[RMDB]
RNA sequence: GGGAACGACUCGAGUAGAGUCGAAAAGAAAGUUCGAGCAAGCUAGCCGGCAAAAAAGCAAACUUGACCACCAAGGAUAAAAGAGAUCUUAUCCAAGGAUGCAAAAGAUAAUCUCACUUUUGACACCAAAACAGGGAGUAGUUCGCUACUCCCUGAACUCAUGGCGAGGAUUCGUCCUCGCCAUGAGAAAAGAAACAACAACAACAAC
Reactivity to 2A3 in 0.01 (KOAc 150mM, MgCl2 10mM, bicine 150mM(pH8.5), 24C), signal-to-noise 1, nucleotides 027 to 156: g060a040a030a000g020u080u230c040g000a030g000c030a150a050g050c010u120a040g010c050c040g000g040c100a040a040a040a040a000a000g130c080a080a090a000c070u100u060g070a060c000c060a030c000c020a000a110g000g010a000u020a000a020a010a000g100a010g000a040u080c030u040u000a000u020c000c000a000a050g020g030a020u080g020c020a060a060a000a000g020a020u090a130a110u150c050u000c050a000c000u000u020u030u020g140a250c210a040c060c000a060a080a130a110c000a000g000g050g000a000g000u000a000g000u070u130c230g030c130u000a000c000u000c020c000c000u000g000a000a000

Record summary
This 207-nucleotide RNA was probed chemically with 2A3. For 2A3, 437 sequencing reads were counted. The data come from the RNA Mapping Database (RMDB), library M2RFPK. The RNA was probed in 150 mM KOAc, 10 mM MgCl2 and 150 mM bicine (pH 8.5) at 24 C.